An RNA of 177 nucleotides, treated with DMS and 2A3 and read out base by base. High DMS reactivity at an A or C suggests that its Watson-Crick edge is free. As a SHAPE reagent, 2A3 marks flexible, mostly unpaired nucleotides at the ribose 2'-OH. For 2A3 the reverse transcriptase was SuperScript II with manganese.

RNA sequence: GGGAACGACUCGAGUAGAGUCGAAAAAACGAAUAAAUCUUUCGCCUUUUACUAAAGAUUUCCGUGGAGGGGAACAAUAGUGAGACUUUAGGUCAAUUUUUGUGGAGCCUGUAUAUACGUACAGGCCGUAUUGCACCUGGUUCGCCAGGUGCAAUACAAAAGAAACAACAACAACAAC
Reactivity to DMS in 0.01 (KOAc 150mM, MgCl2 10mM, bicine 150mM(pH8.5), 24C), signal-to-noise 1, nucleotides 027 to 126: a070a040c030g010a100a010u000a120a100a030u000c020u010u000u050c060g000c030c050u030u010u050u000a120c010u000a030a060a260g000a010u020u060u000c000c030g000u000g010g010a110g030g020g020g010a050a040c010a040a200u060a060g010u000g000a170g040a070c030u000u010u010a010g000g000u000c020a030a030u000u000u000u000u000g020u000g030g010a200g010c000c000u000g000u000a000u000a090u020a050c300g000u010a000c000a000g020g000c030c060
Reactivity to 2A3 in 0.01 (KOAc 150mM, MgCl2 10mM, bicine 150mM(pH8.5), 24C), signal-to-noise 3, nucleotides 027 to 126: a000a000c080g030a060a030u140a060a130a020u070c030u020u070u020c030g060c000c030u060u190u030u080a040c060u060a030a040a160g060a180u060u120u000c000c000g020u080g170g080a140g030g000g000g020a050a030c030a090a120u030a030g050u050g020a070g000a050c010u120u160u230a090g000g050u000c030a120a170u030u050u050u090u090g130u040g060g010a020g000c000c000u010g010u000a000u000a000u010a080c080g000u000a030c010a000g000g020c000c010